[RMDB]
RNA sequence: GGGAACGACUCGAGUAGAGUCGAAAAUACACUUUACGUGUGCUGGUUUCAUUACUUUGUCCCAAACCAGGCACGCGUUAUUAAAGGCCAGUUUGGCCAGGUCCGCGUUAUCGAUGGUCACCAAUAACUAUAUGAACCUAUUCGUAGGUUCAUAUAGAAAAGAAACAACAACAACAAC
Reactivity to DMS in 0.01 (KOAc 150mM, MgCl2 10mM, bicine 150mM(pH8.5), 24C), signal-to-noise 9, nucleotides 027 to 126: u010a120c140a100c120u010u000u010a020c020g030u000g010u000g010c010u000g000g000u000u000u000c160a100u010u010a090c150u010u010u010g010u000c020c020c020a070a040a020c000c000a030g010g010c010a010c000g020c010g010u000u000a050u010u010a060a100a090g010g010c010c010a110g010u000u010u010g020g010c000c010a040g000g010u000c050c030g020c070g010u000u010a060u010c050g000a060u000g010g010u000c060a100c060c070a070a080u010a070a160
Reactivity to 2A3 in 0.01 (KOAc 150mM, MgCl2 10mM, bicine 150mM(pH8.5), 24C), signal-to-noise 9, nucleotides 027 to 126: u100a010c040a020c090u130u130u070a010c010g000u000g000u000g000c000u000g000g030u030u030u080c090a100u080u180a140c100u170u170u200g070u080c020c010c000a000a010a000c020c000a030g140g000c000a000c010g000c000g010u020u030a060u050u150a100a090a010g010g000c010c010a080g140u110u210u130g070g000c000c010a010g010g030u000c010c010g010c040g050u060u080a120u160c040g040a110u080g020g030u040c030a020c060c020a050a060u090a140a040

The record gives the reactivity of an RNA of 177 nucleotides to DMS and 2A3. DMS adducts were read by reverse transcription with MarathonRT. The reactions ran in a buffer of 150 mM KOAc, 10 mM MgCl2 and 150 mM bicine (pH 8.5), at 24 C. The data come from the RNA Mapping Database (RMDB), library M2PK90.